Conditions: 150 mM KOAc, 10 mM MgCl2 and 150 mM bicine (pH 8.5), 24 C. Chemical mapping of a 207-nucleotide RNA with 2A3 and DMS. The DMS profile rests on 3,242 reads. The 2A3 profile rests on 1,931 reads.
RNA sequence: GGGAACGACUCGAGUAGAGUCGAAAAAGAACUUGCCAUUCUCAUUGACAACAUUAACAAUACAUUAGUCAAUCUUGAAUGGCUCAAUAGAAUUGAAACCUAUGUAAAAUGGCCUUGGUAUGUGUGGCUACUAAUAGGCUUAGUAGUAAUAUUUUGCCAUCUCAUUUGAGUUCGCUCAAAUGAGAUGAAAAGAAACAACAACAACAAC
Reactivity to 2A3 in 0.01 (KOAc 150mM, MgCl2 10mM, bicine 150mM(pH8.5), 24C), signal-to-noise 4, nucleotides 027 to 156: a000g060a040a040c070u080u100g020c010c000a000u000u000c000u020c010a000u000u000g040a000c020a090a000c020a090u160u190a240a050c080a150a100u190a120c070a120u100u100a040g000u010c000a000a020u010c140u080u020g000a000a000u000g000g000c000u000c000a010a020u060a040g110a060a070u050u090g010a070a040a040c010c000u050a050u100g080u150a070a070a100a090u120g040g010c030c020u050u080g030g030u080a070u110g040u010g020u030g060g000c000u000a000c000u010a000a070u040a070g140g000c000u050u010a000g000u010a010g010u010a010a210u040a190u150u130u070u060g050c030
Reactivity to DMS in 0.01 (KOAc 150mM, MgCl2 10mM, bicine 150mM(pH8.5), 24C), signal-to-noise 2, nucleotides 027 to 156: a160g000a080a050c060u030u000g010c000c000a050u000u000c000u000c050a060u000u000g000a040c020a100a160c110a130u040u010a300a180c120a130a160u000a130c090a160u030u000a280g020u000c020a000a010u000c030u020u010g010a030a030u010g020g030c010u000c040a040a040u000a060g000a140a300u000u000g000a080a030a110c060c000u000a040u000g000u000a050a040a080a060u000g000g000c030c030u010u000g000g070u000a070u020g000u000g010u000g010g000c000u000a040c020u000a070a040u000a120g000g050c170u000u000a020g030u000a050g010u000a040a100u000a200u000u000u000u000g010c110